[RMDB]
RNA sequence: GGGAACGACUCGAGUAGAGUCGAAAAGUUUACCUUAUCUUUCUGUGGAAAAGUUUUGAUGUCUAGGUUUGUCACAUCAUGCCUGUUGCCUAGCACUACCAAAAGGGUUGUUAUCUAGCAGCAAAGAUUAAUAUGGGAUGUUCGCAUCCCAUAUUAAAAAAGAAACAACAACAACAAC
Reactivity to 2A3 in 0.01 (KOAc 150mM, MgCl2 10mM, bicine 150mM(pH8.5), 24C), signal-to-noise 6, nucleotides 027 to 126: g010u030u080u180a230c010c000u070u130a050u050c000u000u050u000c020u010g060u050g060g040a030a030a060a140g030u030u060u040u070g060a080u040g060u000c020u030a050g020g070u110u200u140g130u130c050a040c010a120u150c050a060u090g050c000c030u090g010u110u090g030c000c010u010a020g000c030a020c030u050a030c020c020a000a070a070a080g150g040g000u010u020g040u000u030a160u100c030u030a020g040c010a000g000c040a070a020a000g030a020
Reactivity to DMS in 0.01 (KOAc 150mM, MgCl2 10mM, bicine 150mM(pH8.5), 24C), signal-to-noise 7, nucleotides 027 to 126: g010u010u000u020a120c030c020u010u010a070u010c020u000u000u000c020u010g020u010g010g010a050a060a070a100g010u000u010u010u010g010a050u000g000u000c020u000a050g010g010u010u010u010g000u000c080a030c110a080u010c130a100u010g000c060c040u000g010u010u010g000c030c000u000a050g010c170a050c040u000a080c070c030a030a050a060a090g010g010g000u000u000g000u000u000a070u010c030u000a100g010c020a030g000c130a030a030a050g000a090